This 177-nucleotide RNA was probed chemically with 2A3 and DMS.
Conditions: 150 mM KOAc, 10 mM MgCl2 and 150 mM bicine (pH 8.5), 24 C.
Source: RMDB library OK1LIB, as collected in RNAgym.

RNA sequence: GGGAACGACUCGAGUAGAGUCGAAAAGCUGGCCGUGGUCACCUUCGUGACGCCCUCGCUGCGAAACGGCUUAUGGCACUUGACAAGCUGGGUUGCCUGCGGCAUGGCCAAUCGCGUCAAGGGCAAGUGUACGCUGUGUAUUCGUACACAGCGUACAAAAAGAAACAACAACAACAAC
Reactivity to 2A3 in 0.01 (KOAc 150mM, MgCl2 10mM, bicine 150mM(pH8.5), 24C), signal-to-noise 7, nucleotides 027 to 126: g050c040u040g030g000c010c010g070u070g020g000u030c010a020c020c040u110u130c120g050u030g040a040c050g000c000c000c000u010c020g020c030u040g000c010g010a030a040a030c060g020g000c000u070u130a110u100g060g000c020a020c050u100u080g040a080c040a080a050g040c050u110g010g150g000u110u120g030c010c020u060g000c060g030g000c060a090u130g020g000c010c020a010a060u050c020g010c010g040u040c040a030a020g010g010g000c020a050a060g050
Reactivity to DMS in 0.01 (KOAc 150mM, MgCl2 10mM, bicine 150mM(pH8.5), 24C), signal-to-noise 3, nucleotides 027 to 126: g000c090u010g020g000c000c010g050u000g000g010u000c010a030c040c140u020u000c100g030u020g000a100c090g010c020c010c010u000c080g000c030u020g000c020g010a010a050a160c170g030g000c000u000u030a080u000g000g020c010a050c030u000u000g020a140c090a050a150g010c050u000g000g010g010u020u010g040c000c000u010g020c080g000g000c020a040u020g020g020c000c010a070a140u010c040g010c050g030u010c060a020a070g000g000g000c030a130a060g030